[RMDB]
Annotation
An RNA of 177 nucleotides, treated with 2A3 and DMS and read out base by base. DMS adducts were read by reverse transcription with MarathonRT. Source: RMDB libraries RFM100 and RFMREP, as collected in RNAgym. The RNA was probed in 150 mM KOAc, 10 mM MgCl2 and 150 mM bicine (pH 8.5) at 24 C.

RNA sequence: GGGAACGACUCGAGUAGAGUCGAAAAAGCUCAUGGUACGCCAUGAGCAACCGGAAGCCCUGGCAGGGUGCGCACCGGAUAAAGCGGCCCUACCUCACCGGCACAGCGUGCCUUACGAGGCACGCAAGGAAGGUAUUAAGUUCGCUUAAUACCUUCCAAAAGAAACAACAACAACAAC
Reactivity to 2A3 in 0.01 (KOAc 150mM, MgCl2 10mM, bicine 150mM(pH8.5), 24C), signal-to-noise 9, nucleotides 027 to 126: a000g000c000u000c000a000u000g010g000u060a050c280g050c040c000a000u000g000a000g000c000a000a010c000c000g010g020a050a020g040c000c000c010u020g020g020c020a020g010g010g030u180g270c010g010c010a110c050c110g090g010a100u240a090a140a010g010c010g010g000c010c000c000u010a020c000c010u030c020a050c010c010g040g000c060a030c040a120g000c000g000u000g000c000c000u040u020a100c290g050a020g000g000c000a000c000g000c000a000a010
Reactivity to DMS in 0.01 (KOAc 150mM, MgCl2 10mM, bicine 150mM(pH8.5), 24C), signal-to-noise 5, nucleotides 027 to 126: a060g010c020u020c020a000u000g000g010u000a120c210g040c010c000a020u000g000a010g000c010a010a040c010c000g000g010a140a140g000c010c010c040u010g000g020c060a030g010g000g010u000g000c020g030c020a140c140c130g000g010a090u060a050a070a080g000c010g000g000c020c010c020u000a050c020c010u000c090a110c040c060g000g000c290a070c220a070g010c020g010u000g000c000c000u000u010a100c210g030a050g000g030c000a010c000g010c030a030a070